[RMDB]
RNA sequence: GGGAACGACUCGAGUAGAGUCGAAAAAGGCGUUGCCCGCCGGCGGCGCCAUGUUUGCGGUGCAGGCCCGUGAAGACGAGGUAGCGCCGAUGCUGGGGCACGAUGUGAGCAUCGCGGCGGUCAAUGGGGCAAUAGAUAGGUUCGCCUAUCUAUUGCCAAAAGAAACAACAACAACAAC
Reactivity to 2A3 in 0.01 (KOAc 150mM, MgCl2 10mM, bicine 150mM(pH8.5), 24C), signal-to-noise 3, nucleotides 027 to 126: a000g150g020c010g000u000u000g000c000c010c000g010c010c000g060g040c050g070g010c050g060c010c000a020u080g030u000u060u110g130c020g030g000u020g000c020a030g300g070c010c000c000g030u070g090a090a060g160a050c020g040a110g050g020u050a050g000c000g000c010c000g000a000u040g000c020u050g000g040g060g000c010a030c090g020a030u060g110u060g070a150g090c020a010u020c000g030c010g050g000c000g000g000u020c000a000a030u090g020g000
Reactivity to DMS in 0.01 (KOAc 150mM, MgCl2 10mM, bicine 150mM(pH8.5), 24C), signal-to-noise 2, nucleotides 027 to 126: a060g000g010c020g010u010u000g000c090c020c010g040c040c000g040g060c040g010g000c080g030c000c000a000u010g000u010u010u020g000c010g010g030u000g030c020a140g010g000c000c000c000g010u030g010a110a080g000a070c000g000a210g050g010u020a140g000c020g010c020c010g000a020u020g000c000u000g000g000g010g000c020a300c050g000a030u030g000u030g010a130g000c040a030u000c000g020c050g000g000c060g000g020u000c030a010a040u000g000g000